[RMDB]
RNA sequence: GGGAACGACUCGAGUAGAGUCGAAAAGAGCUUUUGUCCGGAAUGGUUCCGCCGUGAUCGGGCCAUGCAAUAGUUGCCAACGACAACUAUGCUCCGGUUGCUGAGGCAGCGUAACGCUGCUUGAAAGAUGACGGCAAUCGCUUCGGCGAUUGCCGAACAUCUUGGUACUCUUCGGAGUACCAAGAUGAAAAGAAACAACAACAACAAC
Reactivity to 2A3 in 0.01 (KOAc 150mM, MgCl2 10mM, bicine 150mM(pH8.5), 24C), signal-to-noise 2, nucleotides 027 to 156: g060a000g030c050u100u130u140u140g090u120c020c000g000g040a080a060u110g060g030u300u280c010c060g000c010c110g260u180g080a160u140c010g000g000g000c000c000a020u050g000c000a110a250u000a020g010u000u010g020c020c080a180a070c150g110a120c010a000a000c000u000a010u040g020c010u000c010c020g000g010u040u120g060c040u020g000a060g000g020c000a000g000c010g070u130a060a040c170g000c010u010g030c000u080u080g060a050a080a040g180a040u170g070a010c040g080g000c000a010a010u010c000g000c010u050u050c170g140g000c000g000a000u000u010g000c000c000g010a000a000
Reactivity to DMS in 0.01 (KOAc 150mM, MgCl2 10mM, bicine 150mM(pH8.5), 24C), signal-to-noise 1, nucleotides 027 to 156: g030a120g030c100u020u000u020u020g020u000c000c010g010g050a120a050u040g000g060u000u010c010c020g020c040c090g040u010g000a110u040c050g040g030g030c030c030a070u000g040c090a080a090u010a000g000u000u000g000c000c050a080a210c190g000a090c000a010a020c010u000a000u010g020c010u000c040c000g070g000u000u010g000c000u040g000a170g010g060c000a040g030c000g000u020a090a130c140g040c000u000g010c000u000u010g000a070a110a190g020a120u010g020a260c040g000g010c000a040a000u000c000g050c030u010u000c250g020g020c010g060a050u000u010g040c010c000g000a000a050
Structure probing data (2A3 and DMS) for a 207-nucleotide construct. For DMS, 2,089 sequencing reads were counted. For 2A3, 877 sequencing reads were counted. The RNA was probed in 150 mM KOAc, 10 mM MgCl2 and 150 mM bicine (pH 8.5) at 24 C.